[RMDB]
RNA sequence: GGGAACGACUCGAGUAGAGUCGAAAAUAGGACUACAGGAGAGCGCCACCACGCCUGAUUAAUUUUUGUAUUUUUAGUAGAGAGAGGGUUUCACCAUAUUGGCCAGGCUGGUCUUGAACUCCUGGCCCAAGACUCGAAAUUUCGAUUUCGAGUCUUGAAAAGAAACAACAACAACAAC
Reactivity to DMS in 0.01 (KOAc 150mM, MgCl2 10mM, bicine 150mM(pH8.5), 24C), signal-to-noise 3, nucleotides 027 to 126: u010a100g010g010a060c060u000a080c060a050g000g010a080g010a130g020c060g000c040c030a040c030c020a050c080g010c020c020u000g010a070u000u010a030a040u000u010u010u010u000g010u010a020u000u010u000u010u000a070g010u000a060g000a060g000a060g020a100g020g010g000u000u000u000c050a070c040c040a070u010a120u000u000g020g010c010c000a010g000g010c200u000g010g010u000c060u000u010g010a040a080c040u000c000c010u000g010g010c010c010
Reactivity to 2A3 in 0.01 (KOAc 150mM, MgCl2 10mM, bicine 150mM(pH8.5), 24C), signal-to-noise 1, nucleotides 027 to 126: u070a000g020g040a030c000u030a020c090a020g020g010a050g040a000g010c050g000c000c010a010c000c000a000c010g020c000c010u000g020a060u020u110a090a100u060u150u060u070u140g050u100a170u060u130u020u000u120a030g010u100a020g020a020g000a000g010a040g140g000g000u020u060u120c050a070c010c010a030u060a090u260u120g000g020c040c000a010g000g000c100u110g020g040u060c040u030u100g000a040a020c000u040c040c050u000g000g020c000c020
An RNA of 177 nucleotides, treated with DMS and 2A3 and read out base by base. 2A3 is a SHAPE reagent: it acylates the 2'-hydroxyl of flexible nucleotides of all four kinds. For DMS, 4,306 sequencing reads were counted. The RNA was probed in 150 mM KOAc, 10 mM MgCl2 and 150 mM bicine (pH 8.5) at 24 C. DMS adducts were read by reverse transcription with MarathonRT.